This 177-nucleotide RNA was probed chemically with 2A3 and DMS.
Conditions: 150 mM KOAc, 10 mM MgCl2 and 150 mM bicine (pH 8.5), 24 C.
It was measured as part of the RMDB library OK1LIB.
RNA sequence: GGGAACGACUCGAGUAGAGUCGAAAAGAUAGUGCCCGGACAUUGAUCGUGCUGGUCGUGGUCGCCGAGGCGGUGGAAUGAUCAUUGCGCAAGCGCAGAGGAGUUAGAUCAUUUCGUGUCUGGUCAGCGUCCUACAGCUUUUCGAAGCUGUAGGACGAAAAGAAACAACAACAACAAC
Reactivity to 2A3 in 0.01 (KOAc 150mM, MgCl2 10mM, bicine 150mM(pH8.5), 24C), signal-to-noise 4, nucleotides 027 to 126: g090a030u220a020g070u070g050c000c000c000g020g000a050c050a050u150u270g020a030u070c040g060u090g140c090u080g010g050u070c050g100u130g070g020u140c030g000c000c000g060a120g060g040c060g020g020u050g020g030a010a010u020g010a020u030c030a100u080u110g000c020g000c050a110a100g030c050g000c050a010g030a100g270g020a070g100u130u150a100g030a010u030c010a010u040u060u040c020g030u010g000u030c030u030g000g070u020c010a010g020
Reactivity to DMS in 0.01 (KOAc 150mM, MgCl2 10mM, bicine 150mM(pH8.5), 24C), signal-to-noise 3, nucleotides 027 to 126: g010a080u020a070g030u010g000c020c000c000g030g000a120c110a090u010u050g040a010u010c050g000u010g020c040u010g010g000u010c030g000u000g030g030u020c020g000c000c010g010a070g010g020c020g020g040u010g040g000a010a020u010g000a020u030c000a150u030u000g000c020g020c120a150a180g040c020g040c050a050g020a190g020g020a180g000u010u030a120g000a010u010c030a000u000u000u010c000g020u000g000u010c020u000g010g020u020c080a070g000